[RMDB]
RNA sequence: GGGAACGACUCGAGUAGAGUCGAAAACCUGUUGACUUCGGUCAACAGGAAAAGGUGGAUGCUACGCUACGGAAGUAGCAAAAGUGCAGAAGGAACGCACAAAAACUUAUCCGUUCGCGGAUAAGAACACUAAGUCUGGAUUCGUCCAGACUUAGUGAAAAGAAACAACAACAACAAC
Reactivity to DMS in 0.01 (KOAc 150mM, MgCl2 10mM, bicine 150mM(pH8.5), 24C), signal-to-noise 6, nucleotides 027 to 126: c000c000u000g000u000u000g010a000c000u000u000c210g040g010u000c000a010a010c000a010g010g000a020a020a080a100g010g030u010g010g010a120u000g010c050u020a080c160g010c010u010a030c040g020g020a080a140g020u000a010g000c000a020a030a060a100g010u010g020c010a060g020a080a110g010g010a120a090c150g000c050a020c080a090a050a060a070a170c010u000u000a000u000c000c000g010u000u010c190g020c010g000g000a010u000a000a010g000a080a130
Reactivity to 2A3 in 0.01 (KOAc 150mM, MgCl2 10mM, bicine 150mM(pH8.5), 24C), signal-to-noise 5, nucleotides 027 to 126: c000c000u010g000u000u000g000a000c010u020u040c230g070g000u000c000a000a000c010a000g020g040a020a090a010a020g110g020u100g050g050a090u100g040c020u040a020c080g000c020u030a020c040g090g110a230a060g010u010a000g000c000a020a040a010a000g000u020g000c010a020g050a160a050g140g020a120a040c060g000c050a010c000a030a060a010a020a020c010u000u000a000u000c010c000g010u020u070c300g000c020g060g000a000u000a000a000g020a060a010